[RMDB]
RNA sequence: GGGAACGACUCGAGUAGAGUCGAAAACUCAAUGACUUCGGUCAUUGAGAAAGGACAUAAGUCCAACUGAGCAGCUAUGAGCUCAUACAUCGUCAUAGCAAAAAACACACACGUUCGCGUGUGUGAAGUGUCUAAGUAUCUUCGGAUACUUAGACACAAAAGAAACAACAACAACAAC
Reactivity to DMS in 0.01 (KOAc 150mM, MgCl2 10mM, bicine 150mM(pH8.5), 24C), signal-to-noise 3, nucleotides 027 to 126: c000u000c000a010a000u000g000a030c010u000u020c240g020g010u000c000a000u000u000g010a010g010a030a100a090g010g010a020c000a090u030a150a140g010u000c000c010a150a160c290u000g000a000g010c000a140g000c000u020a020u000g000a010g000c000u000c000a070u000a140c140a030u020c190g020u000c000a010u000a000g020c050a020a050a100a050a070a180c000a000c000a010c000a010c000g000u000u000c210g040c010g010u010g000u010g000u010g000a020a040
Reactivity to 2A3 in 0.01 (KOAc 150mM, MgCl2 10mM, bicine 150mM(pH8.5), 24C), signal-to-noise 2, nucleotides 027 to 126: c000u000c000a000a000u000g010a010c010u020u050c240g120g020u010c000a000u000u000g000a000g000a050a050a010g010g000a020c020a130u300a240a140g010u000c010c000a020a040c060u040g000a010g000c000a000g000c000u000a000u020g000a000g000c000u000c020a050u230a080c070a070u150c160g040u000c000a000u020a000g000c020a120a000a000a050a000a050c010a000c000a000c000a000c000g020u040u040c240g010c010g090u010g000u010g000u000g000a030a010